[RMDB]
RNA sequence: GGGAACGACUCGAGUAGAGUCGAAAAUUUUCAUGAAAUCCCAGUUCUGCUCAAAAUGGGAUAAUAGGUUCAGAGAUUCCAAGGCCGGGCAAACUCUAGCGUGCUUUAGCCACUCUGUUCUGUGCCGAUUUGCCCCAUACAUCAGGUACAUUGAGAACUAAUGAGUCAUCUUCGGAUGACUCAUUAGAAAAGAAACAACAACAACAAC
Reactivity to 2A3 in 0.01 (KOAc 150mM, MgCl2 10mM, bicine 150mM(pH8.5), 24C), signal-to-noise 2, nucleotides 027 to 156: u060u050u040u070c030a040u110g060a040a150a000u020c000c000c000a000g030u120u030c050u100g040c040u060c120a040a080a110a200u010g000g000g000a010u040a060a050u100a160g020g000u050u030c010a000g030a000g020a250u220u120c140c060a070a100g000g000c030c060g000g050g000c060a100a050a070c050u030c040u180a040g050c100g120u020g010c020u080u100u120a000g020c000c000a010c040u040c010u030g080u090u010c050u050g030u030g030c000c000g030a000u010u000u090g030c000c010c030c010a060u070a000c010a070u060c060a050g000g030u080a050c030a080u070u190g160a020g070a090a020
Reactivity to DMS in 0.01 (KOAc 150mM, MgCl2 10mM, bicine 150mM(pH8.5), 24C), signal-to-noise 1, nucleotides 027 to 156: u040u000u000u000c090a180u000g010a060a190a160u010c010c000c000a220g010u010u000c040u010g020c100u000c060a030a070a120a110u000g000g060g030a080u000a030a010u000a090g040g020u000u000c000a140g010a110g010a130u000u000c190c040a170a200g010g000c030c050g030g000g000c030a020a030a000c030u010c120u000a060g010c070g040u000g020c030u000u000u020a070g040c040c010a090c130u000c040u000g010u000u000c020u000g020u010g060c070c030g030a210u000u000u000g000c000c010c030c040a080u010a090c100a070u010c030a040g040g030u010a060c090a090u020u000g000a030g000a090a300
An RNA of 207 nucleotides, treated with 2A3 and DMS and read out base by base. The reactions ran in a buffer of 150 mM KOAc, 10 mM MgCl2 and 150 mM bicine (pH 8.5), at 24 C. It was measured as part of the RMDB library OK3TST. 2A3 adducts were read by reverse transcription with SuperScript II with manganese. High DMS reactivity at an A or C suggests that its Watson-Crick edge is free. The 2A3 profile rests on 1,123 reads.